[RMDB]
RNA sequence: GGGAACGACUCGAGUAGAGUCGAAAAGAUAUGGAGCUCCCUCAUGGGAGCUGACGGAUCGGAAACGAUCCGUAGCGACGAUCAUGACAUGGGAGCUCCUAAGUCAAAACCAUGGCUUCGGCCAUGGCCUCUGCAAUAUGUUCGCAUAUUGCAGAGGAAAAGAAACAACAACAACAAC
Reactivity to 2A3 in 0.01 (KOAc 150mM, MgCl2 10mM, bicine 150mM(pH8.5), 24C), signal-to-noise 3, nucleotides 027 to 126: g030a030u100a080u170g000g000a000g000c010u000c000c010c000u010c000a010u010g000g010g050a010g010c000u020g030a000c000g000g000a000u000c010g020g000a080a050a060c020g000a010u000c000c000g010u000a010g000c010g300a300c030g010a020u030c010a020u030g070a110c050a290u200g000g010g000a000g010c000u000c000c000u000a000a000g000u000c010a010a000a050a120c020c000a000u000g000g000c000u050u060c300g190g000c010c000a000u000g000g000
Reactivity to DMS in 0.01 (KOAc 150mM, MgCl2 10mM, bicine 150mM(pH8.5), 24C), signal-to-noise 5, nucleotides 027 to 126: g010a040u000a300u000g020g000a020g010c010u000c000c010c010u000c030a020u010g000g000g010a040g020c000u000g010a000c010g010g010a000u000c000g000g000a140a140a200c010g010a010u000c000c010g020u000a010g010c000g010a120c280g000a070u020c010a020u000g010a090c300a070u010g010g010g020a020g030c000u010c000c000u000a020a070g010u010c040a090a100a100a300c000c000a010u000g000g020c010u000u020c290g020g010c000c000a010u000g000g000